[RMDB]
The record gives the reactivity of an RNA of 177 nucleotides to DMS and 2A3.
2A3 adducts were read by reverse transcription with SuperScript II with manganese.
For 2A3, 1,787 sequencing reads were counted.
RNA sequence: GGGAACGACUCGAGUAGAGUCGAAAAAAACAAAACUUUAUGGAUAAAUCUGGGAGUAAAAUGUAUCUACUCGAAGAACAACAAACACAAUCGAAAGGAGACUACAUCUUGAUUUGCGCCGGAUGCAACUUGUGCUCUUUUUCGAAAGAGCACAAGUAAAAGAAACAACAACAACAAC
Reactivity to DMS in 0.01 (KOAc 150mM, MgCl2 10mM, bicine 150mM(pH8.5), 24C), signal-to-noise 2, nucleotides 027 to 126: a110a030a050c060a070a090a080a050c120u030u010u010a170u000g010g000a130u010a060a130a050u010c000u010g010g000g020a070g000u010a030a020a020a040u030g010u010a020u000c020u000a000c080u000c020g010a080a060g000a110a070c100a010a110c180a060a030a100c230a050c100a090a100u030c000g000a070a020a100g000g020a020g010a040c120u000a040c050a020u000c060u030u030g000a070u000u000u030g030c060g030c040c020g000g020a050u010g010c080a040
Reactivity to 2A3 in 0.01 (KOAc 150mM, MgCl2 10mM, bicine 150mM(pH8.5), 24C), signal-to-noise 3, nucleotides 027 to 126: a000a000a000c060a030a060a010a010c030u060u200u120a140u160g020g020a050u100a200a120a090u060c010u040g020g020g020a060g070u030a030a050a060a070u070g030u040a040u000c000u020a020c000u000c010g020a030a040g050a050a010c060a040a040c050a030a170a020c070a000c040a120a080u070c020g030a060a050a040g030g020a010g010a040c020u020a020c050a050u020c000u060u180g030a140u060u030u080g040c060g000c010c040g000g010a010u030g050c020a010